[RMDB]
Source: RMDB library M2RFPK, as collected in RNAgym.
An RNA of 207 nucleotides, treated with 2A3 and read out base by base.
The 2A3 profile rests on 481 reads.
RNA sequence: GGGAACGACUCGAGUAGAGUCGAAAAGGACUGCGUAGUCCGGCAACAUCAGCAGAGAGCCCGCUAUACGUGACGGAUUGGCUGAAGCGUACAGAAAUAUUGAGCCUCCUGCAAGAGGCAGCCAAGCAAAACGUACGUGAGUUCGCUCACGUACGAACUCGAUCAGAUUGUUCGCAAUCUGAUCGAGAAAAGAAACAACAACAACAAC
Reactivity to 2A3 in 0.01 (KOAc 150mM, MgCl2 10mM, bicine 150mM(pH8.5), 24C), signal-to-noise 1, nucleotides 027 to 156: g000g000a010c030u030g060c140g280u260a030g000u030c000c000g000g000c010a080a030c010a160u120c060a010g070c100a040g040a000g010a000g060c000c000c040g000c010u020a030u000a010c040g010u010g040a000c040g010g110a130u120u160g020g000c020u000g090a010a000g080c080g040u040a010c030a020g140a120a140a000u300a160u130u190g040a040g000c000c000u000c000c000u120g080c020a120a020g000a010g030g000c040a000g000c010c000a000a050g020c040a000a120a020a020c010g010u010a000c000g000u000g000a000g000u000u110c140g080c210u000c000a000c000g000u000a000c000g000a000a000
Reactivities are given for positions 27 through 156.
High 2A3 reactivity points to a flexible backbone, as in loops and unpaired stretches.